Source: RMDB library OK2TRN, as collected in RNAgym. An RNA of 177 nucleotides, treated with DMS and 2A3 and read out base by base. For DMS, 2,667 sequencing reads were counted.
RNA sequence: GGGAACGACUCGAGUAGAGUCGAAAAUGAUCGAGAGAUCUAACGAUGUACGCGAGUCAAAAGCACAGACUCGAGCGAAAGCUCGGUCGAAAGACCGCGUACAUCGGUCGGCAAGUGUGGAGUCAAACGUAUUACCUGCGUUCGCGCAGGUAAUACGAAAAGAAACAACAACAACAAC
Reactivity to DMS in 0.01 (KOAc 150mM, MgCl2 10mM, bicine 150mM(pH8.5), 24C), signal-to-noise 3, nucleotides 027 to 126: u000g010a020u000c000g000a210g000a270g000a000u000c000u000a100a100c000g020a010u000g000u000a000c000g000c000g000a080g040u000c000a060a050a090a130g040c230a080c270a170g000a010c000u020c010g010a010g020c000g010a100a060a160g020c000u000c000g000g010u000c010g010a110a060a100g000a010c010c000g010c010g000u000a000c010a000u000c000g010g020u010c050g030g010c080a070a090g000u000g020u000g000g000a070g000u000c040a050a070a150
Reactivity to 2A3 in 0.01 (KOAc 150mM, MgCl2 10mM, bicine 150mM(pH8.5), 24C), signal-to-noise 1, nucleotides 027 to 126: u110g000a000u010c010g040a000g010a010g010a090u000c010u010a090a010c030g010a010u000g010u000a010c000g020c000g060a130g040u030c050a000a120a000a140g180c080a040c030a130g000a010c000u070c240g070a000g000c010g070a170a020a000g000c000u000c000g000g000u000c000g030a030a010a020g010a000c000c000g000c000g000u000a000c000a010u000c000g010g000u020c020g000g010c010a070a170g040u060g130u200g220g010a030g050u060c070a130a000a050